[RMDB]
RNA sequence: GGGAACGACUCGAGUAGAGUCGAAAAGAUAUGGACUUUCGAGCGUUACCGAGCGAAGAACAAACGUAACAUCAUUCGGAAACGAAUGUGGUUUGGGAGCUCAGGUAACGCUCGAAAGUCCUAAGUCGUGUGUAUCAAUCUUCGGAUUGAUACACACAAAAGAAACAACAACAACAAC
Reactivity to DMS in 0.01 (KOAc 150mM, MgCl2 10mM, bicine 150mM(pH8.5), 24C), signal-to-noise 1, nucleotides 027 to 126: g030a210u010a300u020g020g000a040c000u000u020u000c000g010a070g000c000g000u020u000a000c010c010g050a010g040c000g000a120a110g000a120a160c030a000a030a020c000g010u010a060a200c270a010u020c020a000u000u000c000g020g020a170a160a300c000g000a020a000u000g060u030g000g000u020u000u000g000g000g000a130g000c000u000c000a100g010g000u000a010a000c010g000c000u000c000g020a000a030a000g000u000c000c020u000a020a020g000u020c100
Chemical mapping of a 177-nucleotide RNA with DMS. The DMS profile rests on 812 reads.